[RMDB]
RNA sequence: GGGAACGACUCGAGUAGAGUCGAAAAGCAUAUAUGACUCGUGAACGUAUUGAAAAAGCACCGAACUUGAAAUUAGCAAUUACAGCAGGUGUAGGAUCUGACCAUGUAGAUUUAGCGGCAGCAAGUGCUUCCCAGUAGCGUUCGCGCUACUGGGAAGAAAAGAAACAACAACAACAAC
Reactivity to 2A3 in 0.01 (KOAc 150mM, MgCl2 10mM, bicine 150mM(pH8.5), 24C), signal-to-noise 2, nucleotides 027 to 126: g030c110a000u110a000u140a080u290g020a060c030u000c020g030u060g060a080a030c000g020u040a150u110u070g080a000a060a000a080a040g070c010a000c030c030g040a110a040c030u010u180g070a050a120a090u140u090a080g010c130a100a020u190u060a130c080a020g000c050a050g000g010u000g020u100a020g060g030a050u030c000u020g050a040c000c010a000u020g030u050a140g030a210u110u130u090a000g000c010g020g070c020a010g000c000a000a050g050u050g050
Reactivity to DMS in 0.01 (KOAc 150mM, MgCl2 10mM, bicine 150mM(pH8.5), 24C), signal-to-noise 2, nucleotides 027 to 126: g000c040a110u060a020u030a080u020g020a050c160u000c060g010u000g030a040a110c090g010u000a090u000u000g000a000a040a100a160a090g000c030a020c000c020g020a080a160c100u000u080g020a020a030a090u060u000a110g040c120a150a130u000u000a010c050a030g000c060a260g020g000u010g040u000a020g000g000a090u020c000u000g010a080c090c080a060u000g000u020a080g000a000u050u050u000a300g000c020g000g000c020a000g000c270a050a150g000u020g000
The record gives the reactivity of an RNA of 177 nucleotides to 2A3 and DMS. Source: RMDB library OK1LIB, as collected in RNAgym. Conditions: 150 mM KOAc, 10 mM MgCl2 and 150 mM bicine (pH 8.5), 24 C.